[RMDB]
RNA sequence: GGGAACGACUCGAGUAGAGUCGAAAAGAUAUGGAGUUAGGCUAUGAAGGGAGGUGUCGGAAACGACACUCCUGGAGCCUUCUCCUAAGUCAAAAGAAUUCACCUGCCUUCGGGCAGGUGAAUUCAAGUUAACCCAAUAGUUCGCUAUUGGGUUAACAAAAGAAACAACAACAACAAC
Reactivity to DMS in 0.01 (KOAc 150mM, MgCl2 10mM, bicine 150mM(pH8.5), 24C), signal-to-noise 4, nucleotides 027 to 126: g020a040u010a300u000g000g000a020g010u000u000a010g030g010c010u000a210u020g010a170a220g010g000g000a020g000g010u010g010u010c000g000g000a090a060a180c000g010a010c000a030c010u000c000c000u000g000g000a010g020c000c000u000u000c010u000c000c000u000a020a080g010u000c050a080a070a130a140g000a030a010u000u000c000a010c010c000u000g010c000c000u000u020c250g020g010g030c000a010g000g000u010g000a000a000u000u010c000a040a080
Reactivity to 2A3 in 0.01 (KOAc 150mM, MgCl2 10mM, bicine 150mM(pH8.5), 24C), signal-to-noise 3, nucleotides 027 to 126: g030a020u090a060u120g010g010a010g050u240u030a010g040g000c030u060a190u300g040a060a090g000g030g020a080g090g140u090g010u080c020g010g010a050a060a050c010g010a000c000a000c010u010c000c010u000g000g000a000g000c000c000u000u000c000u010c010c000u010a120a010g040u000c020a000a010a020a220g010a000a020u000u000c000a000c020c010u010g030c020c000u050u100c300g040g010g000c000a000g000g000u000g000a000a000u000u000c000a000a010